Structure probing data (DMS) for a 177-nucleotide construct. The reactions ran in a buffer of 150 mM KOAc, 10 mM MgCl2 and 150 mM bicine (pH 8.5), at 24 C. High DMS reactivity at an A or C suggests that its Watson-Crick edge is free. For DMS, 1,193 sequencing reads were counted.

[RMDB]
RNA sequence: GGGAACGACUCGAGUAGAGUCGAAAAGAUAUGGACGUGCCAACUAUCAAAUGCUUACAGUUUAGGUAGGUCGGAAACGACCUACCUAAACUGUAAGGCAUUGACCACGGUUGCACGUCCUAAGUCGGCUUCUCAUCUUGUUCGCAAGAUGAGAAGCAAAAGAAACAACAACAACAAC
Reactivity to DMS in 0.01 (KOAc 150mM, MgCl2 10mM, bicine 150mM(pH8.5), 24C), signal-to-noise 1, nucleotides 027 to 126: g020a060u010a300u000g020g010a020c000g010u000g010c070c120a030a010c020u000a160u000c070a070a040a000u020g010c000u000u000a000c000a000g010u000u000u000a010g020g020u010a000g040g010u000c000g000g000a050a080a230c030g010a000c000c000u000a000c000c000u000a000a000a020c000u000g000u000a010a000g010g000c020a000u000u000g050a060c300c300a050c210g000g000u010u000g010c000a020c010g010u000c010c000u000a020a010g020u000c110g000